[RMDB]
RNA sequence: GGGAACGACUCGAGUAGAGUCGAAAAAAGGGCUUUACCAACUCCAACUAUGUUAAAUUGAGCAGGUUGAAUUGACCAUGCAGAUGGCCAGUGCUGUACAGAAAUGAUUGAAAUGUCCGCUCCUGUAAGCGCAUUAGGGAUUCGUCCCUAAUGCGCUAAAAGAAACAACAACAACAAC
Reactivity to 2A3 in 0.01 (KOAc 150mM, MgCl2 10mM, bicine 150mM(pH8.5), 24C), signal-to-noise 1, nucleotides 027 to 126: a000a000g030g000g000c070u090u100u050a050c010c000a010a040c040u050c000c040a030a030c020u110a080u220g080u140u110a090a120a230u240u170g040a040g060c010a000g030g040u040u030g060a070a080u110u050g040a000c010c010a020u090g000c020a020g070a260u030g060g020c020c040a030g080u020g000c060u020g060u110a040c020a010g110a060a130a040u100g050a100u030u070g010a110a040a070u070g000u000c040c000g040c070u060c050c000u080g010u130a060
Reactivity to DMS in 0.01 (KOAc 150mM, MgCl2 10mM, bicine 150mM(pH8.5), 24C), signal-to-noise 1, nucleotides 027 to 126: a060a070g000g030g020c050u000u000u000a100c030c020a080a060c040u000c040c040a070a120c070u010a060u020g030u030u010a050a070a110u000u010g010a130g010c000a030g010g040u010u000g010a080a070u010u000g010a010c020c020a050u010g020c090a090g000a040u010g010g020c000c010a030g020u000g010c010u030g010u010a090c090a010g010a100a040a120u000g010a140u000u020g030a060a090a130u000g000u000c010c030g010c070u000c010c000u000g030u010a130
Chemical mapping of a 177-nucleotide RNA with 2A3 and DMS. The reactions ran in a buffer of 150 mM KOAc, 10 mM MgCl2 and 150 mM bicine (pH 8.5), at 24 C. The DMS profile rests on 891 reads. DMS adducts were read by reverse transcription with MarathonRT.